[RMDB]
RNA sequence: GGGAACGACUCGAGUAGAGUCGAAAAGGGGUCUUGUGGCACUCAACGUCAGGAGCUUGGAUUUAUACAGCUGAAGCCUCCACGGCUGUAUUGUCAGCUCCUGUUAUGGUGAGUGCACAAGACGGAGGCACCCAAAAGGAAUGGUUCGCCAUUCCAAACAAGUAGAUCUCUUCGGAGAUCUACUUGUAAAAGAAACAACAACAACAAC
Reactivity to 2A3 in 0.01 (KOAc 150mM, MgCl2 10mM, bicine 150mM(pH8.5), 24C), signal-to-noise 4, nucleotides 027 to 156: g050g000g020g000u010c020u010u000g000u070g270g040c000a010c000u020c010a170a180c100g180u060c020a010g000g030a000g020c040u220u270g200g010a030u080u300u080a020u060a000c000a000g010c000u010g030a100a000g040c000c000u010c010c000a010c000g010g000c000u020g000u000a010u000u030g020u030c100a010g000c000u000c010c010u000g000u010u030a170u090g250g040u050g020a000g010u000g000c000a000c000a000a000g000a000c000g000g000a000g000g010c000a060c000c000c000a030a170a000a040g000g000a000a010u010g010g060u080u150c220g070c020c000a000u000u000c000c000a000a020
Reactivity to DMS in 0.01 (KOAc 150mM, MgCl2 10mM, bicine 150mM(pH8.5), 24C), signal-to-noise 1, nucleotides 027 to 156: g020g020g030g020u020c010u010u000g020u010g060g020c010a020c000u000c010a040a030c010g000u000c000a010g010g000a000g000c030u000u020g030g040a150u000u000u000a050u000a040c040a010g030c000u000g060a020a140g020c040c040u040c030c020a300c080g000g000c010u000g010u000a020u000u000g010u000c010a130g000c030u000c000c000u000g010u000u000a020u000g020g020u020g010a040g020u000g030c000a000c010a010a070g000a030c000g070g030a050g040g030c030a220c020c000c030a080a070a240a190g010g010a090a000u010g000g020u000u020c130g030c010c000a020u000u000c000c000a010a160
The record gives the reactivity of an RNA of 207 nucleotides to 2A3 and DMS. The 2A3 profile rests on 3,206 reads. DMS adducts were read by reverse transcription with MarathonRT. It was measured as part of the RMDB library RNAMAK.